[RMDB]
RNA sequence: GGGAACGACUCGAGUAGAGUCGAAAAGACCCGUAGAUCAGGACGAGCUGGAGUGGGCAACCACGAACGCGAGGACUGUGAAAACGGGGAGGCUGUGAGUAACAACGAUAACCUCCCCCGGUGAUUCUGCAUUCUGGGGAUUCGUCCCCAGAAUGCAAAAAGAAACAACAACAACAAC
Reactivity to 2A3 in 0.01 (KOAc 150mM, MgCl2 10mM, bicine 150mM(pH8.5), 24C), signal-to-noise 1, nucleotides 027 to 126: g070a050c000c000c010g000u000a030g030a080u070c000a000g020g010a010c000g010a000g000c000u000g000g010a000g080u010g000g020g010c010a010a090c000c000a030c050g000a020a050c010g000c010g000a000g050g000a050c000u010g000u040g000a020a000a000a060c020g020g030g000g000a020g050g000c070u050g030u080g080a050g000u140a160a040c120a010a060c020g070a140u030a120a050c000c000u010c000c000c010c000c000g130g030u180g000a160u100u060c020
Reactivity to DMS in 0.01 (KOAc 150mM, MgCl2 10mM, bicine 150mM(pH8.5), 24C), signal-to-noise 2, nucleotides 027 to 126: g040a040c000c000c040g000u040a040g040a220u000c080a030g000g000a190c000g000a300g020c000u000g060g000a300g020u000g000g000g000c300a040a100c000c000a000c000g000a300a270c300g000c000g000a250g000g000a050c020u020g000u000g000a170a120a060a120c060g000g070g020g000a020g000g000c060u000g000u000g000a300g000u050a090a090c300a190a060c020g000a170u000a010a200c000c000u000c000c000c000c000c020g000g030u000g000a050u000u000c070